This 177-nucleotide RNA was probed chemically with DMS and 2A3.

[RMDB]
RNA sequence: GGGAACGACUCGAGUAGAGUCGAAAACUGUGGCAGAUGAUCAAAACUGUCUGACACAAUUUGAGCUUGCUAUAGCAAGAAAGUCUAACCUAUUCCGGUGUUCUCUCUCCCAUGAGACAAGCCGUUAUUGUUUUGUAUGUUUCGACAUACAAAACAAAAAAGAAACAACAACAACAAC
Reactivity to DMS in 0.01 (KOAc 150mM, MgCl2 10mM, bicine 150mM(pH8.5), 24C), signal-to-noise 7, nucleotides 027 to 126: c110u000g020u000g000g000c000a010g010a000u000g010a110u030c210a090a060a100a150c230u030g010u000c000u000g000a010c010a010c000a010a100u010u000u010g010a130g000c020u000u000g000c010u020a110u030a130g010c000a020a010g000a100a090a060g010u000c060u010a100a150c100c040u010a120u010u010c160c010g010g010u000g010u020u010c060u000c010u000c080u000c040c040c030a110u000g000a050g000a040c090a100a130g010c010c010g000u010u020a090
Reactivity to 2A3 in 0.01 (KOAc 150mM, MgCl2 10mM, bicine 150mM(pH8.5), 24C), signal-to-noise 9, nucleotides 027 to 126: c050u020g010u000g000g000c000a010g000a020u050g020a120u200c180a080a070a050a100c060u110g020u000c000u000g000a000c000a000c000a020a020u080u030u130g050a020g030c000u010u010g000c010u090a060u110a300g000c020a010a010g010a120a080a010g090u030c060u120a050a090c050c010u050a130u160u080c070c010g000g000u030g130u220u010c010u000c000u000c010u020c020c010c000a030u090g000a000g010a020c020a040a050g010c000c000g050u050u080a090
Values cover nucleotides 27 to 126.